Overview:
The record gives the reactivity of an RNA of 207 nucleotides to 2A3 and DMS. For 2A3 the reverse transcriptase was SuperScript II with manganese. DMS adducts were read by reverse transcription with MarathonRT.
[RMDB]
RNA sequence: GGGAACGACUCGAGUAGAGUCGAAAAGAUUAUUACGUGUUGGGGGAGACGUUCAUGGCGCUGGCACGGAAACAUGGGUGCUCUGACACCUGUAUAGGUAAACGCCUUCACAAAGCGGAGGGGAUUGUUGAAGGCAUGCUGAUGAUGCUGGGAGUGACCACUCAUAUAUCUUCGGAUAUAUGAGUGGAAAAGAAACAACAACAACAAC
Reactivity to 2A3 in 0.01 (KOAc 150mM, MgCl2 10mM, bicine 150mM(pH8.5), 24C), signal-to-noise 6, nucleotides 027 to 156: g030a030u130u120a050u140u170a170c090g020u120g040u150u070g020g000g010g000g010a020g010a010c030g030u030u030c090a070u090g040g000c040g010c050u030g010g000c020a030c090g050g050a070a070a010c050a080u080g050g000g000u020g020c020u060c070u160g050a080c000a010c040c000u020g020u080a150u090a060g060g000u040a010a010a040c050g020c000c000u010u020c030a020c020a050a070a010g040c090g030g030a060g030g020g000g000a020u010u050g050u050u100g010a020a010g000g000c030a020u070g000c020u070g010a090u040g010a020u040g020c020u020g020g000g060a050g040u110g030a030
Reactivity to DMS in 0.01 (KOAc 150mM, MgCl2 10mM, bicine 150mM(pH8.5), 24C), signal-to-noise 1, nucleotides 027 to 156: g030a160u000u000a080u000u000a110c070g030u000g020u000u010g010g030g020g030g010a080g050a060c080g000u000u020c080a100u010g020g030c050g010c070u000g000g000c040a070c050g000g020a140a080a120c090a040u000g010g020g010u000g010c030u010c120u020g050a190c110a020c000c000u000g050u020a050u010a060g000g020u000a050a080a120c120g000c020c000u000u010c010a120c050a040a060a100g030c040g060g010a090g000g060g060g000a200u000u000g000u000u000g010a070a050g000g040c010a110u000g040c020u000g000a070u000g010a060u000g000c040u000g050g000g010a130g030u020g010a210
Description:
Source: RMDB library OK3TST, as collected in RNAgym.